Structure probing data (DMS and 2A3) for a 207-nucleotide construct. It was measured as part of the RMDB library RNAMAK. In probing experiments dimethyl sulfate is read out at A N1 and C N3, which are open when not base-paired. For DMS, 3,228 sequencing reads were counted. The RNA was probed in 150 mM KOAc, 10 mM MgCl2 and 150 mM bicine (pH 8.5) at 24 C. Values cover nucleotides 27 to 156. DMS adducts were read by reverse transcription with MarathonRT.
[RMDB]
RNA sequence: GGGAACGACUCGAGUAGAGUCGAAAAUCAGCGUUCGCGCUGAAAAAAACCGUAGGUUGCGAGGAUCUGACACGUACGACGAUCUGCACUUCGAAAGAGGUGCAGGGAGUACGUUCAGGGAGCAACCUAAACGGAAAAAGAGCUAUUCGUAGCUCAAUCAUUUUUGAGUGUUCGCACUCAAAAAUGAAAAAGAAACAACAACAACAAC
Reactivity to DMS in 0.01 (KOAc 150mM, MgCl2 10mM, bicine 150mM(pH8.5), 24C), signal-to-noise 1, nucleotides 027 to 156: u000c000a000g010c050g000u000u000c300g040c000g050c000u010g050a010a010a100a120a060a060a100c010c010g030u000a060g000g030u010u010g030c000g000a160g050g020a080u000c010u000g010a060c140a030c000g020u000a010c020g000a100c140g010a100u010c000u010g000c010a000c000u000u000c000g010a220a050a250g010a020g000g050u000g000c000a000g000g000g010a050g000u010a000c010g020u010u020c000a020g020g000g000a070g010c000a040a020c000c010u000a000a000a110c010g010g000a070a050a130a050a090g000a030g030c000u000a090u000u010c250g040u000a040g000c000u000c010a040a140
Reactivity to 2A3 in 0.01 (KOAc 150mM, MgCl2 10mM, bicine 150mM(pH8.5), 24C), signal-to-noise 2, nucleotides 027 to 156: u020c000a000g000c020g060u120u130c220g000c040g030c130u050g040a080a010a010a000a000a010a010c000c000g000u010a040g020g000u010u010g000c050g020a190g030g020a030u000c010u010g010a000c000a010c280g000u000a000c000g160a040c010g010a100u020c000u000g000c000a000c000u030u000c000g040a040a040a030g000a000g010g010u010g000c000a000g000g000g000a000g010u010a000c010g010u000u000c000a000g010g000g000a000g020c010a000a010c000c000u000a010a040a000c000g020g030a090a020a030a020a070g010a000g000c000u030a030u110u160c240g150u080a010g000c000u000c000a000a070